[RMDB]
RNA sequence: GGGAACGACUCGAGUAGAGUCGAAAACACACAAGGUUCGCCUUGUGUGCAAGAAUAGACGAAUACUACCGUAGAAGUAUUCAGGUCACAUAACUACGGAAUUGGCGUUCUGCUUCGGCAGAACGAAAUGAGUAGACCUUUUCGAAGGUCUACUCAUAAAAGAAACAACAACAACAAC
Reactivity to 2A3 in 0.01 (KOAc 150mM, MgCl2 10mM, bicine 150mM(pH8.5), 24C), signal-to-noise 6, nucleotides 027 to 126: c000a000c010a010c000a010a000g040g010u030u060c120g120c040c000u000u000g000u000g000u010g000c010a030a030g090a070a100u160a130g080a040c050g010a010a000u010a020c010u070a280c000c010g020u020a010g020a110a000g020u000a010u020u010c050a020g110g070u090c080a060c030a250u190a240a090c020u010a010c010g000g080a040a090u110u140g170g030c000g000u000u010c000u010g000c000u020u030c110g110g000c000a000g000a000a000c000g000a000a010
Reactivity to DMS in 0.01 (KOAc 150mM, MgCl2 10mM, bicine 150mM(pH8.5), 24C), signal-to-noise 5, nucleotides 027 to 126: c010a000c000a000c010a000a000g010g010u000u000c290g030c010c000u000u000g010u000g040u000g020c050a070a060g000a150a130u000a100g010a130c130g000a020a020u000a010c010u000a110c010c030g010u010a010g000a190a040g000u000a000u000u000c010a080g020g010u000c060a100c130a060u010a090a110c020u000a000c010g010g010a280a130u010u000g010g010c000g010u000u000c000u000g000c000u000u010c200g030g010c000a000g010a010a000c000g000a010a030
The record gives the reactivity of an RNA of 177 nucleotides to 2A3 and DMS. The DMS profile rests on 4,772 reads. Reactivities are given for positions 27 through 126. It was measured as part of the RMDB library M2PK50. DMS adducts were read by reverse transcription with MarathonRT. The reactions ran in a buffer of 150 mM KOAc, 10 mM MgCl2 and 150 mM bicine (pH 8.5), at 24 C.